[RMDB]
RNA sequence: GGGAACGACUCGAGUAGAGUCGAAAAGAUAUGGAUGCACAGGACAUGUUCUGUGUCGGAAACGACACUGAACAACAGCCUGGCAUCCUAAGUCAAACCUUUAUAGCAGUUCGCUGCUAUAAAGGAAGGUAUAAUUGCCGUUCGCGGCAAUUAUACCAAAAGAAACAACAACAACAAC
Reactivity to 2A3 in 0.01 (KOAc 150mM, MgCl2 10mM, bicine 150mM(pH8.5), 24C), signal-to-noise 2, nucleotides 027 to 126: g010a010u020a020u060g010g000a040u010g020c120a150c000a300g000g060a100c110a270u300g050u000u000c010u020g000u020g000u020c020g000g010a030a010a030c010g000a000c000a010c000u010g000a010a000c040a070a060c060a010g030c000c000u000g000g020c000a000u020c000c000u000a010a000g000u000c010a060a020a210c000c000u020u000u030a000u000a000g000c020a010g010u050u200c270g130c200u010g000c000u000a000u000a000a000a000g000g000a060a030
Reactivity to DMS in 0.01 (KOAc 150mM, MgCl2 10mM, bicine 150mM(pH8.5), 24C), signal-to-noise 1, nucleotides 027 to 126: g010a010u000a080u020g000g000a020u000g010c010a190c010a000g010g020a070c100a230u040g010u000u020c000u000g000u000g000u010c000g000g040a060a020a100c010g030a020c010a030c000u000g010a000a010c010a130a200c220a190g010c000c000u000g000g000c000a030u010c000c000u000a010a090g010u010c000a130a150a280c010c000u020u010u040a000u010a030g000c010a010g010u010u020c300g000c000u000g010c010u000a000u010a010a000a010g030g010a040a040